An RNA of 177 nucleotides, treated with 2A3 and DMS and read out base by base. The RNA was probed in 150 mM KOAc, 10 mM MgCl2 and 150 mM bicine (pH 8.5) at 24 C. Values cover nucleotides 27 to 126. For DMS the reverse transcriptase was MarathonRT.

[RMDB]
RNA sequence: GGGAACGACUCGAGUAGAGUCGAAAAGUAUGCUGUACCAUUUUUUCCUGGGAUUGUAGUUCAAUUGGUCAGAGCACCGCCCUGUCAAGGCGGAAGCUGCGGGUUCGAGUCCCGUCAGUCCCGAUGGCAUAGAGCCUUCGUUCGCGAAGGCUCUAUGAAAAGAAACAACAACAACAAC
Reactivity to 2A3 in 0.01 (KOAc 150mM, MgCl2 10mM, bicine 150mM(pH8.5), 24C), signal-to-noise 1, nucleotides 027 to 126: g080u060a100u140g100c110u100g090u150a090c020c020a090u050u050u000u020u030u030c000c010u040g000g000g040a010u000u020g010u020a010g000u030u030c000a000a010u060u140g090g080u300c070a010g000a000g000c000a000c040c010g030c010c000c020u210g250u280c070a020a010g000g000c000g000g030a000a000g010c000u000g010c010g000g000g020u000u000c000g000a000g010u020c000c000c010g000u000c010a000g000u000c000c000c040g000a020u020g050g000
Reactivity to DMS in 0.01 (KOAc 150mM, MgCl2 10mM, bicine 150mM(pH8.5), 24C), signal-to-noise 4, nucleotides 027 to 126: g010u010a050u000g020c080u010g010u000a090c050c040a020u000u010u000u000u000u000c020c010u000g010g000g000a030u000u010g010u000a020g000u010u000c010a010a030u000u010g020g010u010c140a020g010a010g010c000a090c020c000g030c000c010c020u000g020u010c300a120a150g000g000c000g020g000a010a030g010c100u000g000c020g010g000g000u000u000c010g010a300g000u000c000c000c010g010u000c010a010g010u000c000c000c000g010a030u010g000g000